[RMDB]
RNA sequence: GGGAACGACUCGAGUAGAGUCGAAAACUGGAUGGUCAGCAGCUGGACCGUUUCGCUGCUCUACGAACAGCUCGUGCGCUAUGCAGUGAUCCUGACAUUCGCAAGCCGGGAUGAAGAGGCGCAGUCGCGCCACUAGGCUAUUCGUAGCCUAGUGGCGAAAAGAAACAACAACAACAAC
Reactivity to 2A3 in 0.01 (KOAc 150mM, MgCl2 10mM, bicine 150mM(pH8.5), 24C), signal-to-noise 9, nucleotides 027 to 126: c040u040g050g060a070u080g040g020u060c030a020g010c020a020g030c090u110g020g050a080c030c060g010u040u060u050c040g000c020u060g010c010u000c020u040a080c040g060a140a020c020a050g030c020u040c050g120u120g030c040g000c040u050a040u140g060c000a020g020u030g080a050u030c010c010u030g020a080c020a080u110u110c110g020c090a050a040g020c020c010g010g020g030a040u070g040a060a060g050a060g060g000c030g000c030a030g130u150c060g000
Reactivity to DMS in 0.01 (KOAc 150mM, MgCl2 10mM, bicine 150mM(pH8.5), 24C), signal-to-noise 5, nucleotides 027 to 126: c040u010g000g010a050u000g000g000u000c050a130g020c040a050g000c030u010g000g000a070c070c010g010u000u000u030c080g010c090u010g010c050u000c040u030a060c050g010a090a150c120a050g000c030u000c060g020u010g010c110g020c050u000a050u020g030c020a040g000u020g000a100u010c020c010u000g010a120c060a090u010u020c090g010c090a100a090g000c030c020g010g000g000a060u020g000a130a100g000a150g010g000c020g010c070a060g000u040c120g030

The record gives the reactivity of an RNA of 177 nucleotides to 2A3 and DMS. For DMS, 12,182 sequencing reads were counted. The reactions ran in a buffer of 150 mM KOAc, 10 mM MgCl2 and 150 mM bicine (pH 8.5), at 24 C. Reactivities are given for positions 27 through 126. For 2A3, 10,188 sequencing reads were counted. The data come from the RNA Mapping Database (RMDB), library OK1LIB.